[RMDB]
RNA sequence: GGGAACGACUCGAGUAGAGUCGAAAAAUUAAGUACCCCAUGGGCGGAAUAGAAGGUUAUUGCCAAAAACUAUGGACAAUCAGUACUAUACCAUACUUGUAUCUGGCAGCCUAUGAGAGCGGAGUAACGAACAUACUUGAUUCGUCAAGUAUGUUCGAAAAGAAACAACAACAACAAC
Reactivity to 2A3 in 0.01 (KOAc 150mM, MgCl2 10mM, bicine 150mM(pH8.5), 24C), signal-to-noise 3, nucleotides 027 to 126: a010u160u060a090a060g040u080a120c030c000c000c010a040u010g040g000g010c050g020g160a120a060u090a120g100a160a080g060g050u140u080a120u150u190g000c000c000a050a050a020a000a070c070u100a050u040g010g030a040c070a040a130u100c030a050g070u100a030c060u050a010u070a090c020c010a010u030a070c040u080u090g070u070a070u110c020u000g020g000c020a020g030c010c010u040a030u020g090a120g010a010g030c050g070g040a070g040u120a110a030
Reactivity to DMS in 0.01 (KOAc 150mM, MgCl2 10mM, bicine 150mM(pH8.5), 24C), signal-to-noise 4, nucleotides 027 to 126: a090u020u000a110a110g000u010a120c040c020c000c060a070u010g020g010g020c010g020g010a090a070u010a050g010a090a080g010g020u020u020a050u010u020g010c010c010a040a070a080a110a100c180u000a040u000g000g010a110c130a050a060u010c090a050g000u000a070c120u010a100u010a150c040c040a040u000a030c130u010u010g030u000a070u010c090u000g000g030c040a090g010c010c020u000a020u000g000a070g020a100g020c070g000g000a140g010u010a070a140